[RMDB]
RNA sequence: GGGAACGACUCGAGUAGAGUCGAAAAACGUGCGAUACGUCGCACGAAUUGGUCCUCGGUAGUGGUUUCCGGGCAGUUAUACCCGUGAACUUCGAUCGAAGAUCCAUAGCUCGGAUACGUCCGAGCAUGUAAUAGUCAACUUCGGUUGACUAUUACAAAAAGAAACAACAACAACAAC
Reactivity to 2A3 in 0.01 (KOAc 150mM, MgCl2 10mM, bicine 150mM(pH8.5), 24C), signal-to-noise 9, nucleotides 027 to 126: a000c010g000u000g000c010g000a010u020a050c240g100u010c000g000c000a000c000g020a000a040u050u070g010g000u010c000c000u000c010g000g000u020a030g010u020g020g010u010u050u020c040c000g010g010g010c060a070g040u180u190a150u140a170c010c000c010g010u050g010a000a000c000u000u000c010g010a010u010c000g000a010a010g000a020u030c030c030a070u080a100g000c000u000c000g010g000a020u030a070c210g060u020c000c000g000a000g000c000a000
Reactivity to DMS in 0.01 (KOAc 150mM, MgCl2 10mM, bicine 150mM(pH8.5), 24C), signal-to-noise 7, nucleotides 027 to 126: a090c030g030u000g010c000g020a010u000a050c210g030u000c000g010c000a010c010g000a040a030u020u010g010g010u000c000c030u000c020g010g010u000a040g010u000g000g000u000u000u010c220c010g000g000g010c120a100g000u030u030a120u020a160c020c000c010g010u000g010a010a000c000u000u000c010g010a000u000c000g010a020a020g000a020u010c010c110a060u020a100g010c000u000c000g000g000a050u020a080c200g000u000c000c000g000a020g010c010a000

The record gives the reactivity of an RNA of 177 nucleotides to 2A3 and DMS.
The RNA was probed in 150 mM KOAc, 10 mM MgCl2 and 150 mM bicine (pH 8.5) at 24 C.
DMS adducts were read by reverse transcription with MarathonRT.
2A3 is a SHAPE reagent: it acylates the 2'-hydroxyl of flexible nucleotides of all four kinds.